[RMDB]
RNA sequence: GGGAACGACUCGAGUAGAGUCGAAAAGAUAUGGAACCCCUCGCAGAAUAGGAUGGUGAACUACUCUGAGGGAUCGGAAACGAUCCCGAAGAGCACCCGCUCCUAUUCUGCGAGGGGUUCCUAAGUCCGAAGAUAUCAUGUUCGCAUGAUAUCUUCGAAAAGAAACAACAACAACAAC
Reactivity to DMS in 0.01 (KOAc 150mM, MgCl2 10mM, bicine 150mM(pH8.5), 24C), signal-to-noise 1, nucleotides 027 to 126: g000a130u000a300u010g010g030a010a020c020c000c000c030u030c000g050c020a030g020a030a020u000a000g010g100a030u000g010g070u000g020a070a030c130u010a300c010u010c010u000g000a300g000g020g050a000u000c000g030g000a080a150a300c010g000a010u000c000c000c000g030a200a000g000a000g000c040a000c000c060c140g000c070u000c000c000u030a010u000u000c010u000g020c000g030a000g000g000g020g010u020u000c000c000u000a030a050g010u000c070